[RMDB]
RNA sequence: GGGAACGACUCGAGUAGAGUCGAAAAGAAAGAAAGAAAUUAGCUCGCCAGUUAGCGAGGUCUGUCCCCACACGACAGAUAAUCGGGUGCAACUCCCGCCUCUUUUCCGAGGGUCAUCGGAACCAAAAAAACUCAGGCAACUUCGGUUGCCUGAGAAGACGUAUGGUAGGUUCGCCUACCAUACGUCAAAAGAAACAACAACAACAAC
Reactivity to 2A3 in 0.01 (KOAc 150mM, MgCl2 10mM, bicine 150mM(pH8.5), 24C), signal-to-noise 2, nucleotides 027 to 156: g020a000a030a000g050a030a130a020g030a040a120a040u150u060a090g050c010u000c000g020c020c070a190g160u190u180a000g000c000g000a000g000g020u000c000u020g000u010c020c010c050c020a020c000a000c060g040a010c000a010g010a010u030a030a090u090c010g000g000g010u010g000c000a000a000c020u030c000c000c010g020c020c000u000c000u070u160u090u000c010c000g000a000g010g000g040u100c030a010u020c000g020g020a010a030c050c050a020a060a060a000a020a030a050c000u010c000a000g000g030c000a000a000c000u020u070c110g100g010u010u010g020c010c000u020g000a000g000a000a000
Overview
Structure probing data (2A3) for a 207-nucleotide construct. It was measured as part of the RMDB library M2RFPK. The 2A3 profile rests on 1,520 reads. Reactivities are given for positions 27 through 156.